[RMDB]
RNA sequence: GGGAACGACUCGAGUAGAGUCGAAAAUCGGAUUCGUCCGAGUAACAACCUUUGUGCCUAUGGAGCUAAUACAGCUAGCGAUACCCAUUGGGUAUCGAACUACUAGCUUGAUUAGCGUUGAAAUAGGCACUCUGGUGCGGCCAUCGUUCGCGAUGAAGGUAAAUAGAGUAUUCGUACUCUAUUUACCAAAAGAAACAACAACAACAAC
Reactivity to 2A3 in 0.01 (KOAc 150mM, MgCl2 10mM, bicine 150mM(pH8.5), 24C), signal-to-noise 7, nucleotides 027 to 156: u030c000g000g020a030u040u050c220g050u010c090c000g000a000g050u120a070a110c110a030a030c000c000u000u000u010g000u000g000c000c000u010a010u010g020g010a030g010c000u000a010a000u150a100c010a000g000c000u000a000g010c000g000a000u010a000c000c020c090a300u200u300g000g000g000u000a000u000c000g000a030a010c010u130a040c000u000a020g000c000u040u100g010a010u000u000a000g000c000g010u020u030g000a010a010a000u000a000g000g000c000a000c000u000c000u000g000g000u050g050c090g060g040c050c000a030u030c020g090u140u110c230g020c040g180a050u170g060a120a100
Reactivity to DMS in 0.01 (KOAc 150mM, MgCl2 10mM, bicine 150mM(pH8.5), 24C), signal-to-noise 4, nucleotides 027 to 156: u000c000g010g010a100u010u010c240g020u010c020c010g010a080g020u000a070a090c070a110a070c010c000u000u000u000g010u010g020c000c000u000a010u000g020g010a300g010c000u000a010a000u000a130c070a060g000c000u010a010g000c000g010a020u000a000c010c000c000a300u000u000g030g030g030u010a000u010c000g000a030a210c040u000a170c010u000a000g010c000u010u010g030a030u000u000a010g000c000g020u010u010g010a120a150a030u000a010g000g000c000a000c000u000c010u000g000g030u000g000c040g000g000c050c010a110u000c050g020u000u000c090g030c050g000a080u010g010a240a190